The record gives the reactivity of an RNA of 177 nucleotides to DMS and 2A3. Reactivities are given for positions 27 through 126. Source: RMDB library OK1LIB, as collected in RNAgym. For 2A3 the reverse transcriptase was SuperScript II with manganese.
RNA sequence: GGGAACGACUCGAGUAGAGUCGAAAACAGUCCAACGCUUCACUAAGCCAUUUUACCUCACCCCCACUGAUGUUCGCCGACCGUUGACUAUUCUCUACAAACCACAAAGACAUUCGAACACUAUACCACCGUCCUAAUAUUUCGAUAUUAGGACGGUAAAAGAAACAACAACAACAAC
Reactivity to DMS in 0.01 (KOAc 150mM, MgCl2 10mM, bicine 150mM(pH8.5), 24C), signal-to-noise 5, nucleotides 027 to 126: c090a100g020u010c020c050a090a050c120g000c010u000u020c030a060c080u000a130a140g010c050c040a090u010u020u000u010a130c070c020u010c070a100c040c030c000c020c020a070c060u000g010a060u010g010u010u000c050g010c010c000g010a090c060c060g030u000u010g000a100c080u010a070u010u010c010u000c030u020a070c100a060a070a080c020c000a050c070a040a060a080g030a070c090a080u000u000c070g000a030a070c040a060c040u020a070u030a120c050c080
Reactivity to 2A3 in 0.01 (KOAc 150mM, MgCl2 10mM, bicine 150mM(pH8.5), 24C), signal-to-noise 9, nucleotides 027 to 126: c040a010g070u040c010c020a050a030c050g020c040u050u040c040a030c090u080a060a030g020c010c010a080u080u060u050u120a080c020c010u030c020a060c000c000c000c000c010a040c040u060g030a060u060g040u060u050c020g020c030c010g040a060c010c020g020u020u050g030a020c020u030a090u130u030c020u010c010u030a050c050a030a100a040c020c010a050c040a080a110a000g060a030c020a050u040u060c030g030a040a010c040a020c050u050a030u060a120c010c060